[RMDB]
RNA sequence: GGGAACGACUCGAGUAGAGUCGAAAAGAUAUGGACUUUAACAGCGCCACACCGAGGAGUAGUCCUACAUCGGAAACGAUGUAGGACUACUUACAGUGUGGAACUACGCUGCUAAAGUCCUAAGUCACACACAUCAUAUGUUCGCAUAUGAUGUGUGAAAAGAAACAACAACAACAAC
Reactivity to DMS in 0.01 (KOAc 150mM, MgCl2 10mM, bicine 150mM(pH8.5), 24C), signal-to-noise 4, nucleotides 027 to 126: g000a020u000a300u010g000g000a010c000u000u000u000a010a010c000a000g010c000g010c000c000a010c010a000c000c010g020a300g000g000a010g000u000a000g000u000c000c000u000a010c010a000u000c010g010g010a170a130a270c010g010a010u000g010u000a000g010g000a010c000u000a000c000u010u000a010c000a020g000u000g000u000g000g010a070a020c160u020a300c010g000c010u000g000c030u000a000a010a010g000u000c010c000u010a000a060g010u000c040a300